[RMDB]
RNA sequence: GGGAACGACUCGAGUAGAGUCGAAAAGCCCCUGCAGUGAGAAGCCACACAACUGAACUGGUUAGUUGCAGUUAAAGGCAUGCUUUGCACCUGUUACCAGGCAGGCUCCUAUUUCAACAGGGAUGUGCGUAGAUGGUGAAUUCGUUCACCAUCUACGAAAAGAAACAACAACAACAAC
Reactivity to 2A3 in 0.01 (KOAc 150mM, MgCl2 10mM, bicine 150mM(pH8.5), 24C), signal-to-noise 4, nucleotides 027 to 126: g000c000c000c000c000u040g010c030a100g030u050g110a060g010a060a010g010c020c010a020c010a010c020a080a050c040u060g010a050a020c000u080g280g140u200u250a040g030u050u160g130c010a000g000u020u050a080a050a020g020g000c000a020u110g030c030u120u090u080g010c010a050c010c020u030g010u060u070a110c000c040a020g050g030c010a010g010g030c000u000c000c000u060a180u070u210u110c060a090a080c010a070g030g010g050a050u070g060u080g060
Reactivity to DMS in 0.01 (KOAc 150mM, MgCl2 10mM, bicine 150mM(pH8.5), 24C), signal-to-noise 4, nucleotides 027 to 126: g020c070c000c010c120u010g010c050a080g020u010g000a060g010a130a110g000c010c010a060c210a170c230a040a030c040u000g020a070a090c020u000g010g010u020u010a050g020u000u000g020c010a030g010u010u000a040a110a110g020g010c040a050u000g000c050u010u000u010g020c030a080c030c010u000g000u010u010a100c170c130a050g000g000c030a040g000g000c100u000c010c010u000a080u010u000u010c110a070a070c130a070g000g000g000a120u000g010u010g010
Notes: An RNA of 177 nucleotides, treated with 2A3 and DMS and read out base by base. The reactions ran in a buffer of 150 mM KOAc, 10 mM MgCl2 and 150 mM bicine (pH 8.5), at 24 C. The 2A3 profile rests on 4,347 reads.